An RNA of 177 nucleotides, treated with 2A3 and DMS and read out base by base.
The DMS profile rests on 1,916 reads.
2A3 is a SHAPE reagent: it acylates the 2'-hydroxyl of flexible nucleotides of all four kinds.
[RMDB]
RNA sequence: GGGAACGACUCGAGUAGAGUCGAAAACUUGUGAGUCAGCUUCUUGACGGUAGAUAAGUGUGGAUGGAGUGAGAGGAGGAGUCCUGUGUAUGUCGUUGUCAACGUCGACCGAGCGUCCGUGCCAAGCCUAGGCAACUAUGUUCGCAUAGUUGCCUAGAAAAGAAACAACAACAACAAC
Reactivity to 2A3 in 0.01 (KOAc 150mM, MgCl2 10mM, bicine 150mM(pH8.5), 24C), signal-to-noise 2, nucleotides 027 to 126: c040u100u100g060u100g090a020g030u040c010a030g060c110u090u060c000u030u050g030a040c060g000g100u070a080g010a120u080a020a160g040u030g080u080g140g000a100u040g050g020a080g080u040g050a040g000a020g030g030a020g020g030a020g050u000c000c020u010g020u050g040u050a060u210g040u020c020g010u050u060g080u100c040a010a000c060g050u100c020g020a040c020c000g050a030g020c020g030u010c000c000g050u040g010c040c010a050a000g020c020
Reactivity to DMS in 0.01 (KOAc 150mM, MgCl2 10mM, bicine 150mM(pH8.5), 24C), signal-to-noise 2, nucleotides 027 to 126: c030u000u020g030u010g000a090g000u000c040a100g020c100u000u010c060u000u010g020a080c070g000g010u000a050g040a060u010a060a080g010u010g040u000g000g000a080u010g010g000a090g010u010g000a100g020a110g030g010a060g000g000a100g020u000c020c020u010g000u000g010u000a060u000g030u000c040g040u000u000g010u010c070a050a080c120g000u000c060g000a090c020c000g010a120g010c040g020u000c010c020g000u000g030c050c060a050a100g000c130

The reactions ran in a buffer of 150 mM KOAc, 10 mM MgCl2 and 150 mM bicine (pH 8.5), at 24 C. Reactivities are given for positions 27 through 126. Source: RMDB library RFMREP, as collected in RNAgym. The 2A3 profile rests on 1,169 reads. For 2A3 the reverse transcriptase was SuperScript II with manganese.